[RMDB]
RNA sequence: GGGAACGACUCGAGUAGAGUCGAAAAUAUGUCCCCAAGGCUUUCUAUAUCCUGCCCAGGACUAUAAAAUCACUAGAAAUACAUUUCAGAUUUAUUCUCUCGCUCAGCCUACAACAAAUCAAUAGGUGUGGACCAGAGUUCACAUGUCUGAUGUGAACGCGCUAAAUAGUUUCGACUAUUUAGCGCGAAAAGAAACAACAACAACAAC
Reactivity to DMS in 0.01 (KOAc 150mM, MgCl2 10mM, bicine 150mM(pH8.5), 24C), signal-to-noise 1, nucleotides 027 to 156: u010a130u010g010u000c000c000c000c010a250a220g000g030c040u000u000u010c060u010a130u000a060u000c030c010u010g030c110c050c040a070g000g030a050c020u000a130u010a050a080a050a010u020c040a070c040u010a110g000a070a040a110u000a120c040a040u000u000u000c030a160g030a020u000u030u010a010u040u000c000u000c030u000c070g010c030u010c010a070g030c000c020u000a120c060a090a300c020a080a100a060u010c130a110a110u010a020g050g010u000g000u000g030g040a060c030c030a070g010a030g000u000u010c000a030c050a040u000g000u000c010u010g010a130u000g010u010g020a020a160
Reactivity to 2A3 in 0.01 (KOAc 150mM, MgCl2 10mM, bicine 150mM(pH8.5), 24C), signal-to-noise 3, nucleotides 027 to 156: u200a080u100g020u010c000c000c000c000a020a040g040g000c010u100u170u030c120u150a110u040a110u260c000c060u030g010c000c020c000a030g020g020a040c030u040a050u110a190a110a030a080u140c030a050c110u050a040g140a070a070a030u150a080c030a030u040u070u050c020a000g020a040u000u030u110a090u260u070c020u010c020u010c020g020c010u020c010a010g010c000c000u050a020c020a130a030c020a010a210a050u180c080a070a110u060a110g060g000u150g130u030g190g000a010c020c000a040g030a010g040u030u040c040a050c000a030u080g060u030c070u070g030a020u010g010u000g020a050a060